[RMDB]
RNA sequence: GGGAACGACUCGAGUAGAGUCGAAAACUAUUUAACGGGGCAGUUAACGGCCUACAACGACAUUACUGACUUUACAGUGAAGCCUUGUUAAACUGUAAAAAUCCCCAAGUAUACCAGCUGUUAGCCGCAUUCUAAUGCCCUUCGGGGCAUUAGAAUGAAAAGAAACAACAACAACAAC
Reactivity to DMS in 0.01 (KOAc 150mM, MgCl2 10mM, bicine 150mM(pH8.5), 24C), signal-to-noise 1, nucleotides 027 to 126: c030u010a060u010u000u010a100a100c030g000g000g010g010c030a100g000u000u010a100a130c090g020g000c010c060u050a080c070a070a060c060g040a080c160a080u000u010a030c020u000g010a200c150u010u010u000a050c000a000g000u000g010a110a200g000c010c040u000u010g020u000u000a090a100a040c090u020g000u000a020a060a050a090a140u000c020c010c000c130a070a080g010u000a060u030a060c120c040a050g020c010u000g000u000u010a070g000c030c030g030
Annotation
Chemical mapping of a 177-nucleotide RNA with DMS. It was measured as part of the RMDB library OK2TST. The RNA was probed in 150 mM KOAc, 10 mM MgCl2 and 150 mM bicine (pH 8.5) at 24 C. DMS adducts were read by reverse transcription with MarathonRT. Reactivities are given for positions 27 through 126. For DMS, 764 sequencing reads were counted.